[RMDB]
RNA sequence: GGGAACGACUCGAGUAGAGUCGAAAAUGGUAUAUCGAUGGCAUUUGUCUUAUCAACAGUGCUGACUUAUAUAUUAGGUUUUGAUGAGAAAAUAGAUGAAAAUAGUGUGGUGCCGCGCCCAGAUAACUAUCACCUCCAUAUUCGUAUGGAGGUGAUAAAAAGAAACAACAACAACAAC
Reactivity to 2A3 in 0.01 (KOAc 150mM, MgCl2 10mM, bicine 150mM(pH8.5), 24C), signal-to-noise 2, nucleotides 027 to 126: u030g000g060u040a050u010a010u160c070g020a070u040g020g000c010a020u160u050u240g040u000c020u040u050a030u060c010a010a020c030a070g040u040g040c000u020g020a010c010u140u030a050u030a030u030a040u120u070a060g010g110u000u000u090u140g030a050u080g000a010g050a030a160a060a030u160a030g100a090u120g130a010a090a070a070u090a100g050u040g040u030g160g010u030g000c030c020g000c020g040c020c000c010a020g020a060u100a050a030c070
Reactivity to DMS in 0.01 (KOAc 150mM, MgCl2 10mM, bicine 150mM(pH8.5), 24C), signal-to-noise 4, nucleotides 027 to 126: u000g000g010u000a050u000a030u000c150g000a110u000g010g020c010a010u010u010u000g010u010c000u010u010a070u000c200a180a020c100a030g020u010g010c030u000g010a090c060u010u000a030u000a060u010a080u010u000a060g010g000u000u010u000u010g010a080u000g000a110g000a070a040a060a060u000a100g000a080u000g010a060a050a060a080u000a060g010u000g010u000g010g020u000g010c010c030g000c170g000c020c010c030a110g000a090u000a050a070c180

Annotation
This 177-nucleotide RNA was probed chemically with 2A3 and DMS. Source: RMDB library OK2TRN, as collected in RNAgym. Reactivities are given for positions 27 through 126. DMS adducts were read by reverse transcription with MarathonRT.